The record gives the reactivity of an RNA of 177 nucleotides to DMS and 2A3. For 2A3, 13,759 sequencing reads were counted. Values are in units of 0.01, from 0 to 300, in steps of 10. It was measured as part of the RMDB library OK2TST. DMS adducts were read by reverse transcription with MarathonRT. For 2A3 the reverse transcriptase was SuperScript II with manganese. Conditions: 150 mM KOAc, 10 mM MgCl2 and 150 mM bicine (pH 8.5), 24 C.
[RMDB]
RNA sequence: GGGAACGACUCGAGUAGAGUCGAAAAGGCAGCAGGUGCGGAAUUGUUCAUCGUGGAGGGCGAUUCGGCUGGCGGUUCCGCCAAGCAGGCGCGCAACCGCGCCAAUCAGGCCAUUCUGCCGCUACGAGAUUAAAUUUACUUUCGAGUAAAUUUAAUCAAAAGAAACAACAACAACAAC
Reactivity to DMS in 0.01 (KOAc 150mM, MgCl2 10mM, bicine 150mM(pH8.5), 24C), signal-to-noise 9, nucleotides 027 to 126: g010g010c010a030g010c100a040g010g020u000g010c040g010g010a060a070u000u010g010u000u000c050a110u000c070g010u000g010g010a090g010g000g010c030g000a030u000u000c100g020g010c020u000g020g030c000g010g000u000u000c040c010g000c010c010a090a140g020c240a160g000g020c010g010c210g020c160a040a030c040c010g020c010g000c040c030a050a050u000c140a110g010g010c010c020a090u000u000c020u010g020c020c020g010c050u000a050c130g000a150
Reactivity to 2A3 in 0.01 (KOAc 150mM, MgCl2 10mM, bicine 150mM(pH8.5), 24C), signal-to-noise 6, nucleotides 027 to 126: g030g000c010a010g020c020a020g040g040u090g050c040g060g070a060a080u100u080g040u110u080c040a070u060c120g080u070g050g080a080g030g030g010c020g010a010u040u050c090g040g010c040u080g090g000c000g000g000u030u010c030c010g000c000c000a030a020g180c080a060g030g000c010g000c010g000c040a000a020c010c000g010c000g000c010c010a010a050u110c060a020g100g000c010c000a020u100u020c010u050g010c010c010g000c030u050a050c060g080a050